Annotation:
Conditions: 150 mM KOAc, 10 mM MgCl2 and 150 mM bicine (pH 8.5), 24 C. An RNA of 177 nucleotides, treated with DMS and read out base by base. Reactivities are given for positions 27 through 126. For DMS the reverse transcriptase was MarathonRT. For DMS, 885 sequencing reads were counted.

RNA sequence: GGGAACGACUCGAGUAGAGUCGAAAACCACCCUGACCUAGAGCAAAUGCUCGGGGCGCUCCCCUGGGCUUGAAACUUGCAGUAACAGGUGUGAACAUUCUAGUAGUAGUUUGAUGAUCAUGUAUGCGUUAUGUUCACACUUCGGUGUGAACAUAACAAAAGAAACAACAACAACAAC
Reactivity to DMS in 0.01 (KOAc 150mM, MgCl2 10mM, bicine 150mM(pH8.5), 24C), signal-to-noise 2, nucleotides 027 to 126: c020c040a220c080c020c000u000g000a130c080c050u010a200g010a090g000c060a070a150a070u010g000c020u010c000g010g000g010g010c210g000c210u010c090c010c010c010u010g020g000g020c020u010u000g020a100a160a060c040u000u000g010c150a090g000u000a050a150c040a010g010g010u010g010u000g010a110a190c040a050u000u000c070u000a050g050u000a050g030u000a010g010u010u000u010g030a150u000g020a110u000c080a040u000g030u000a100u000g020c210